[RMDB]
The data come from the RNA Mapping Database (RMDB), library M2RFOK. The record gives the reactivity of an RNA of 207 nucleotides to 2A3. The reactions ran in a buffer of 150 mM KOAc, 10 mM MgCl2 and 150 mM bicine (pH 8.5), at 24 C.
RNA sequence: GGGAACGACUCGAGUAGAGUCGAAAAAUCCUCAGGUUCAUAAGCGUGAUGAUUGGGUGUUCAUGCUCCAUGCAUGACAUGUGCCUCCGUUGAACCUUGUUACGACCUUGGCACAUUACCCAUCUGAAAAAGACGUUCGCGUUCGCGCGAACGUCAACCUAAUUCGCUCGUUCGCGAGCGAAUUAGGAAAAGAAACAACAACAACAAC
Reactivity to 2A3 in 0.01 (KOAc 150mM, MgCl2 10mM, bicine 150mM(pH8.5), 24C), signal-to-noise 2, nucleotides 027 to 156: a020u020c030c030u020c040a040g040g020u110u070c050a020u130a250a100g100c100g110u070g060a130u040g000a010u160u270g010g000g030u080g060u060u040c000a000u000g000c000u090c220c040a080u230g000c000a000u000g000a010c000a000u040g000u000g000c010c020u010c040c010g020u020u000g020a020a040c000c030u040u140g090u010u060a120c060g030a040c070c080u070u110g010g050c020a020c000a020u050u070a030c000c000c000a010u000c010u080g080a060a010a040a040a030g000a000c000g000u000u000c010g000c020g000u020u040c210g010c020g000c000g020a000a000c000g000u000c000a000a000
Background:
2A3 adducts were read by reverse transcription with SuperScript II with manganese. Values cover nucleotides 27 to 156.